[RMDB]
RNA sequence: GGGAACGACUCGAGUAGAGUCGAAAAGCUGGGUGAGCCAUGGUAAAUGUGGCUGCGAUCCACGUCUUGUCGCAAAUCAACAAGAGAUUGAUCACCCUGCACGAUGGUUGGCCCUUCGGUCGGCUUGUCAAGGGACGCUGUUCGCGGCGUUCCUUGAAAAAGAAACAACAACAACAAC
Reactivity to DMS in 0.01 (KOAc 150mM, MgCl2 10mM, bicine 150mM(pH8.5), 24C), signal-to-noise 9, nucleotides 027 to 126: g010c010u000g000g000g020u000g010a080g010c030c000a010u000g010g020u040a050a080a090u030g010u000g000g000c010u000g000c040g000a020u010c090c080a090c140g000u010c050u010u010g010u000c030g010c060a040a080a060u010c040a050a160c050a140a080g010a110g000a120u000u000g000a080u000c000a020c000c000c000u000g000c020a110c120g010a080u020g000g010u000u010g000g000c010c010c120u010u030c100g010g020u010c040g000g000c020u000u010g010
Reactivity to 2A3 in 0.01 (KOAc 150mM, MgCl2 10mM, bicine 150mM(pH8.5), 24C), signal-to-noise 9, nucleotides 027 to 126: g020c020u020g000g000g000u010g020a010g000c010c000a030u060g060g130u300a140a120a110u300g000u010g000g000c000u010g000c010g010a010u050c060c050a080c050g100u030c080u080u110g010u010c010g010c040a020a030a070u030c010a010a050c020a140a070g080a040g040a300u000u030g010a010u050c000a000c000c000c000u000g000c020a010c030g040a040u090g030g000u020u040g020g000c010c020c000u070u110c070g020g010u010c010g010g020c020u040u080g050